The record gives the reactivity of an RNA of 207 nucleotides to DMS and 2A3. 2A3 is a SHAPE reagent: it acylates the 2'-hydroxyl of flexible nucleotides of all four kinds.
RNA sequence: GGGAACGACUCGAGUAGAGUCGAAAAAGUGAGAAAUACAUAAACAAAAGUAGAGACGUAAAAGAAGCAUGAGAGAAGGGUGAGAAAGUGAAAUCCUGAGACAAGAUGAAUGGUGUGUGAGCACUCAAACCCAGGAAGUAGCAAAAGGUGGAAGGAAUAAAUGCUAUUUAUUCGUAAAUAGCAUUUAAAAAGAAACAACAACAACAAC
Reactivity to DMS in 0.01 (KOAc 150mM, MgCl2 10mM, bicine 150mM(pH8.5), 24C), signal-to-noise 4, nucleotides 027 to 156: a070g020u000g010a140g020a100a080a100u000a110c060a130u000a050a090a190c050a070a070a090a120g030u000a070g010a080g020a040c080g010u000a060a050a090a060g000a060a060g030c050a040u000g000a090g020a070g000a070a030g010g010g040u000g010a070g020a020a050a080g010u000g000a060a080a110u000c020c030u000g000a060g020a060c090a040a130g010a090u000g020a070a080u000g010g010u000g030u000g030u000g010a110g010c040a050c040u000c050a050a070a100c040c030c030a100g010g010a030a070g010u000a060g000c040a040a050a060a060g000g010u000g010g000a060a050g010g010a080a180
Reactivity to 2A3 in 0.01 (KOAc 150mM, MgCl2 10mM, bicine 150mM(pH8.5), 24C), signal-to-noise 5, nucleotides 027 to 156: a000g060u050g010a060g060a020a150a040u210a060c080a070u210a080a140a020c060a040a090a040a020g030u070a020g020a020g010a010c030g060u100a070a010a060a050g050a030a000g010c030a020u080g030a010g000a000g000a080a040g010g020g010u030g010a040g020a010a040a010g030u040g050a050a020a020u050c010c010u040g020a030g010a050c060a070a000g020a060u090g040a060a080u090g010g010u030g010u010g030u030g040a030g010c000a010c010u070c030a040a050a060c000c000c000a000g000g020a040a020g020u050a010g020c010a040a020a020a060g020g000u030g010g020a020a020g030g020a010a010
The data come from the RNA Mapping Database (RMDB), library OK3TST.